[RMDB]
RNA sequence: GGGAACGACUCGAGUAGAGUCGAAAAGUGGAGUCGCCCUUGAAAUACGACCCUUUGAUUAUCUGGUACCUAACCCUAACGGGAACAUUGCGUGGUGGGUAGUUUGACUGGGGUGGUCGCCUCCAAAAUAGUGCAAUGUCUUCGGACAUUGCACUAUAAAAGAAACAACAACAACAAC
Reactivity to DMS in 0.01 (KOAc 150mM, MgCl2 10mM, bicine 150mM(pH8.5), 24C), signal-to-noise 3, nucleotides 027 to 126: g020u020g020g000a030g030u010c000g010c020c020c030u020u000g040a090a070a100u020a060c120g010a050c010c010c010u010u010u000g010a050u000u000a030u000c010u020g000g030u000a020c030c010u010a140a070c010c010c000u000a080a090c300g000g010g010a100a090c140a150u020u010g000c130g000u010g010g010u010g010g000g000u010a030g000u000u020u020g000a070c120u040g000g000g010g000u020g000g000u000c010g010c060c000u010c020c010a060a040a110
Reactivity to 2A3 in 0.01 (KOAc 150mM, MgCl2 10mM, bicine 150mM(pH8.5), 24C), signal-to-noise 4, nucleotides 027 to 126: g130u070g030g000a050g000u040c010g030c020c000c000u000u120g110a120a110a030u160a050c060g070a060c010c000c000u030u060u070g090a080u020u060a030u060c030u020g090g140u060a000c000c000u060a050a120c000c000c020u040a070a030c040g000g000g060a110a040c030a130u100u190g020c080g020u050g050g240u020g020g060g000u000a030g020u040u020u100g070a080c050u030g000g000g000g020u030g000g010u030c010g000c030c000u000c010c000a080a040a010